Chemical mapping of a 177-nucleotide RNA with DMS and 2A3. For 2A3 the reverse transcriptase was SuperScript II with manganese. Conditions: 150 mM KOAc, 10 mM MgCl2 and 150 mM bicine (pH 8.5), 24 C.
RNA sequence: GGGAACGACUCGAGUAGAGUCGAAAACCACCCACAAUUUAUCCAAAAAAUUUAUCCACCUAACCCCAGAUCACUGCAAACGAAAUGUAUAUCACUAUUCACGCGUGGUUCCAAUUAUGGCGGCUAGGGUCAUUAUCUUAUUCGUAAGAUAAUGACCAAAAGAAACAACAACAACAAC
Reactivity to DMS in 0.01 (KOAc 150mM, MgCl2 10mM, bicine 150mM(pH8.5), 24C), signal-to-noise 5, nucleotides 027 to 126: c030c050a150c030c020c030a080c100a100a070u020u010u010a040u050c090c090a010a010a080a050a120a100u020u020u010a050u010c020c010a050c020c020u010a060a100c040c020c020c010a070g010a050u010c040a020c020u020g000c030a040a070a130c070g000a060a060a110u010g000u010a050u040a040u020c050a040c050u010a080u000u000c050a050c100g010c080g010u000g010g010u000u010c020c030a060a080u030u010a060u010g000g010c050g010g020c040u010a050g010
Reactivity to 2A3 in 0.01 (KOAc 150mM, MgCl2 10mM, bicine 150mM(pH8.5), 24C), signal-to-noise 9, nucleotides 027 to 126: c020c010a030c020c010c000a060c050a070a080u110u150u140a120u140c050c050a060a040a010a040a040a060u110u160u090a080u040c020c010a030c000c010u030a040a060c010c010c000c010a010g010a050u040c010a010c050u080g010c040a050a090a060c060g080a070a060a050u080g050u040a050u020a020u150c030a020c060u070a080u070u090c030a020c060g020c010g010u030g010g000u050u020c010c000a020a020u160u050a060u140g060g000c030g010g020c030u060a050g050

Source: RMDB libraries RFM100 and RFMREP, as collected in RNAgym.